Source information
Conditions: 150 mM KOAc, 10 mM MgCl2 and 150 mM bicine (pH 8.5), 24 C. The record gives the reactivity of an RNA of 177 nucleotides to 2A3 and DMS. For 2A3 the reverse transcriptase was SuperScript II with manganese. For DMS the reverse transcriptase was MarathonRT.

RNA sequence: GGGAACGACUCGAGUAGAGUCGAAAAUGACCGAGGGGGGAGCUUGGAACGUGGGGGACCAGUGGAGCCAUGGGAUGCUCUUCCCGAUUCCGUCCAAUCCCCACCCCCGAGGGUCGCCCAGGAAUGGACUUCUAUUCUAGUUCGCUAGAAUAGAAGUAAAAGAAACAACAACAACAAC
Reactivity to 2A3 in 0.01 (KOAc 150mM, MgCl2 10mM, bicine 150mM(pH8.5), 24C), signal-to-noise 2, nucleotides 027 to 126: u130g010a000c010c000g030a060g020g010g010g000g000g020a020g010c030u030u030g050g020a150a070c020g030u180g030g030g000g000g050a020c020c080a060g030u070g090g010a000g010c030c030a140u150g070g150g010a060u080g020c010u000c000u070u020c000c000c020g010a010u030u030c000c000g030u000c000c010a000a020u040c020c000c010c000a090c040c010c010c000c000g000a050g070g000g030u030c010g010c010c000c010a010g050g120a110a120u180g080g030
Reactivity to DMS in 0.01 (KOAc 150mM, MgCl2 10mM, bicine 150mM(pH8.5), 24C), signal-to-noise 5, nucleotides 027 to 126: u010g000a080c000c010g000a300g000g010g010g020g010g000a090g010c210u000u010g020g010a060a060c100g020u000g020g000g000g010g010a060c170c110a070g020u000g000g000a040g010c030c060a210u010g010g000g010a300u010g010c060u000c030u000u010c220c000c010g010a060u010u000c110c010g010u000c010c040a040a090u000c020c020c030c060a140c020c010c000c010c010g000a190g000g000g020u000c030g000c020c010c010a200g000g000a080a110u010g000g000